About this RNA: Source: RMDB library OK2TRN, as collected in RNAgym. Chemical mapping of a 177-nucleotide RNA with 2A3 and DMS. Values cover nucleotides 27 to 126. In probing experiments dimethyl sulfate is read out at A N1 and C N3, which are open when not base-paired.
RNA sequence: GGGAACGACUCGAGUAGAGUCGAAAAGGGCAUCAGUAAAUGACUCUCAGCGUUUGGCAUAGAAGGAUAGCAAGCUUUAAGAAAAGCCAUGAUCUGCUGAAAAGCCAUAAUGGCCUUGGGGCCAUCCGUUACUUAACGGGUUCGCCCGUUAAGUAACAAAAGAAACAACAACAACAAC
Reactivity to 2A3 in 0.01 (KOAc 150mM, MgCl2 10mM, bicine 150mM(pH8.5), 24C), signal-to-noise 4, nucleotides 027 to 126: g030g000g000c030a040u050c050a050g050u160a070a170a130u080g060a090c010u000c000u000c070a020g010c020g050u070u100u100g020g000c000a010u030a090g090a060a040g100g030a070u110a060g050c030a110a020g030c020u060u070u100a180a080g130a060a150a030a000g000c000c010a010u010g030a090u040c040u100g000c010u020g030a040a090a030a020g020c010c000a030u100a130a080u040g030g000c010c030u080u120g260g000g030g000c000c000a010u030c020c020
Reactivity to DMS in 0.01 (KOAc 150mM, MgCl2 10mM, bicine 150mM(pH8.5), 24C), signal-to-noise 4, nucleotides 027 to 126: g000g010g010c030a060u000c070a120g000u030a050a060a090u000g000a060c040u000c110u000c050a060g010c060g010u000u000u000g020g000c020a090u000a080g000a070a050g000g000a040u000a070g010c160a060a110g010c020u010u000u000a080a140g010a080a070a100a070g010c000c020a060u000g010a060u010c090u010g010c020u010g010a030a060a060a040g010c010c060a050u000a090a040u000g000g000c010c020u000u000g010g020g010g020c040c040a020u000c120c100